[RMDB]
RNA sequence: GGGAACGACUCGAGUAGAGUCGAAAAGAUUAAUGUUCGCAUUAAUCAAAAAAGCGUACUACGAGCAGUUGUGAAUAGAACUACACGUGAUUCCCAAAUAGGAAUCCGUGCUAUUCGAAUGCUCGUAUCGCAAAAAACCAGUCCUUCGGGACUGGAACUAGACCACGUAGUUCGCUACGUGGUCUAGAAAAGAAACAACAACAACAAC
Reactivity to 2A3 in 0.01 (KOAc 150mM, MgCl2 10mM, bicine 150mM(pH8.5), 24C), signal-to-noise 1, nucleotides 027 to 156: g020a000u040u040a000a050u000g020u020u020c090g030c070a000u000u000a000a030u090c030a070a000a170a170a000a000g010c020g000u040a010c040u000a000c040g020a000g000c000a140g130u300u190g160u160g250a000a000u030a000g050a070a020c040u180a000c300a020c060g090u240g050a000u000u050c030c040c010a060a300a120u190a080g000g000a000a000u010c020c010g000u000g000c000u000a000u000u000c000g010a020a090u000g000c000u000c020g010u000a000u000c020g000c000a040a040a040a040a040a040c040c010a000g000u000c000c000u050u220c300g120g020g000a000c000u000g000g020a000a000